Structure probing data (DMS and 2A3) for a 177-nucleotide construct. For DMS, 4,245 sequencing reads were counted. Conditions: 150 mM KOAc, 10 mM MgCl2 and 150 mM bicine (pH 8.5), 24 C. Reactivities are given for positions 27 through 126.

[RMDB]
RNA sequence: GGGAACGACUCGAGUAGAGUCGAAAAGAACCGCGAUUCGUCGCGGUUCGAGCGCCGAAGCGCGCAACGGCGUAACGGCAGCAUUAGCGCGCAGCUGCCGACGAUCGGGUGGUUUCGACCACCCGAAAUGCUUCAGCUAAUUCGUUAGCUGAAGCAUAAAAGAAACAACAACAACAAC
Reactivity to DMS in 0.01 (KOAc 150mM, MgCl2 10mM, bicine 150mM(pH8.5), 24C), signal-to-noise 4, nucleotides 027 to 126: g010a010a000c020c010g020c000g010a010u000u010c180g030u000c000g030c000g020g000u000u000c010g010a090g020c030g010c000c020g010a080a160g010c050g000c040g020c020a060a160c070g000g020c010g030u000a080a110c060g010g000c010a000g000c020a120u000u010a120g010c050g010c030g020c040a220g000c010u000g010c010c000g020a100c170g010a120u010c000g000g010g030u000g010g000u000u000u000c160g000a020c000c000a010c000c000c000g000a000a010
Reactivity to 2A3 in 0.01 (KOAc 150mM, MgCl2 10mM, bicine 150mM(pH8.5), 24C), signal-to-noise 2, nucleotides 027 to 126: g000a000a020c000c000g000c010g010a020u050u060c170g030u000c000g120c000g000g000u000u000c000g000a000g010c010g000c010c000g060a170a030g010c030g030c000g010c080a050a050c020g040g000c010g030u060a170a070c030g040g020c020a010g000c020a100u100u080a070g040c040g010c000g000c100a010g010c000u010g000c030c000g050a100c050g050a050u040c000g010g000g000u000g000g030u020u060u070c130g050a040c000c000a000c000c000c000g000a000a010